This 177-nucleotide RNA was probed chemically with DMS and 2A3. It was measured as part of the RMDB library TTRDES.

[RMDB]
RNA sequence: GGGAACGACUCGAGUAGAGUCGAAAAGAUAUGGAAAUUCGUACUAGUUCUUGGAUUUAAGCUCGGAAACGAGCUUUGUCAGAACUGUACGAGAUUUCCUAAGUCAAAAGCUCCGUUCGCGGAGCAAGAGAUGAUAGAACUUCGGUUCUAUCAUCUCAAAAGAAACAACAACAACAAC
Reactivity to DMS in 0.01 (KOAc 150mM, MgCl2 10mM, bicine 150mM(pH8.5), 24C), signal-to-noise 2, nucleotides 027 to 126: g000a050u000a300u010g000g010a000a000a020u000u000c000g010u000a010c000u010a020g010u000u000c010u000u010g060g000a020u000u020u000a010a010g000c000u000c000g010g010a110a110a290c000g020a010g030c000u000u020u000g000u000c000a030g000a000a020c000u000g010u000a010c000g000a020g010a020u000u000u000c000c000u010a030a200g000u000c020a120a080a160a190g000c010u000c000c020g030u000u000c280g030c020g020g010a010g020c000a020a040
Reactivity to 2A3 in 0.01 (KOAc 150mM, MgCl2 10mM, bicine 150mM(pH8.5), 24C), signal-to-noise 2, nucleotides 027 to 126: g010a040u130a060u160g000g000a030a000a000u000u000c010g010u010a000c050u190a170g000u020u010c020u090u260g220g030a140u300u300u140a010a020g000c010u000c010g030g050a080a100a070c020g020a000g000c000u010u000u000g030u000c000a000g000a020a010c020u030g010u010a000c000g000a000g000a000u000u000u030c010c000u010a160a010g040u010c010a040a090a000a220g000c000u000c000c000g040u030u060c300g010c020g200g010a030g000c000a000a020